[RMDB]
Chemical mapping of a 177-nucleotide RNA with DMS and 2A3. Values cover nucleotides 27 to 126. The RNA was probed in 150 mM KOAc, 10 mM MgCl2 and 150 mM bicine (pH 8.5) at 24 C.
RNA sequence: GGGAACGACUCGAGUAGAGUCGAAAAAUGAUGAAACUCCUAGAAGUGGGCGUGCCUGGCAGAAGGAGUAGGUCGAAAACUGGUUGCUGAAGCAGCAUAAGCUCCCUGAUGUAAGCUCCCUGAAUAAACUCGUUAUGCAAUUCGUUGCAUAACGAGUAAAAGAAACAACAACAACAAC
Reactivity to DMS in 0.01 (KOAc 150mM, MgCl2 10mM, bicine 150mM(pH8.5), 24C), signal-to-noise 4, nucleotides 027 to 126: a080u040g010a060u030g000a210a120a060c070u000c010c000u020a110g030a140a130g010u040g010g010g020c090g040u020g010c040c020u010g000g030c050a080g020a170a060g020g020a050g030u020a040g000g010u010c060g000a110a080a090a070c090u010g000g010u000u000g020c010u010g000a110a110g000c020a090g010c040a040u020a060a100g000c040u000c010c010c020u030g000a080u000g030u000a070a070g000c070u000c020c010c000u000g000a060a080u030a060a050
Reactivity to 2A3 in 0.01 (KOAc 150mM, MgCl2 10mM, bicine 150mM(pH8.5), 24C), signal-to-noise 3, nucleotides 027 to 126: a000u060g040a010u090g040a130a050a020c040u000c020c030u060a080g050a190a010g080u090g010g020g000c040g020u050g040c010c020u050g070g090c020a010g020a110a010g010g000a020g020u050a020g010g080u020c030g020a000a000a020a080c040u070g050g020u050u050g010c030u060g030a160a010g040c050a010g000c010a090u040a110a000g010c010u000c010c000c000u040g030a040u090g060u070a030a060g000c000u000c000c000c000u010g070a050a060u120a100a080